[RMDB]
RNA sequence: GGGAACGACUCGAGUAGAGUCGAAAAACAAGAACAUGGAAUUCUUCAUGAUUUCGCUUUGAUUGAUGAAACAGGAAUACGUCAUCGCUUCCGUGAAUAUCUAAGAAAACUUACCUUAUUUGGCAAAACUCACAAGGAAUUUCGAUUCCUUGUGAGUAAAAGAAACAACAACAACAAC
Reactivity to 2A3 in 0.01 (KOAc 150mM, MgCl2 10mM, bicine 150mM(pH8.5), 24C), signal-to-noise 3, nucleotides 027 to 126: a000c040a030a050g060a060a020c030a070u120g030g020a040a100u130u000c010u090u060c050a050u080g030a070u020u060u060c010g020c030u050u090u090g050a120u090u100g010a050u020g050a100a090a040c070a070g090g110a100a040u150a130c060g030u010c020a020u030c030g000c040u040u000c020c010g000u000g000a010a020u110a030u060c030u040a040a030g040a060a050a030a040c020u050u050a030c010c010u110u120a190u080u090u070g010g000c010a000a100a020
Reactivity to DMS in 0.01 (KOAc 150mM, MgCl2 10mM, bicine 150mM(pH8.5), 24C), signal-to-noise 3, nucleotides 027 to 126: a070c060a080a070g020a070a120c070a050u010g000g000a080a180u010u000c070u000u000c100a070u000g000a120u000u000u000c050g020c050u000u010u000g000a060u010u000g030a080u010g000a060a080a070c150a040g000g010a070a090u010a130c130g000u000c060a050u000c020g010c140u000u000c090c110g000u000g000a070a060u000a040u000c020u000a060a050g000a020a030a050a140c080u000u000a080c070c010u010u010a100u000u000u010g000g010c070a050a030a040
Structure probing data (2A3 and DMS) for a 177-nucleotide construct. Reactivities are given for positions 27 through 126. For DMS the reverse transcriptase was MarathonRT. The reactions ran in a buffer of 150 mM KOAc, 10 mM MgCl2 and 150 mM bicine (pH 8.5), at 24 C. DMS (dimethyl sulfate) methylates the pairing face of unpaired adenines and cytosines. For 2A3 the reverse transcriptase was SuperScript II with manganese.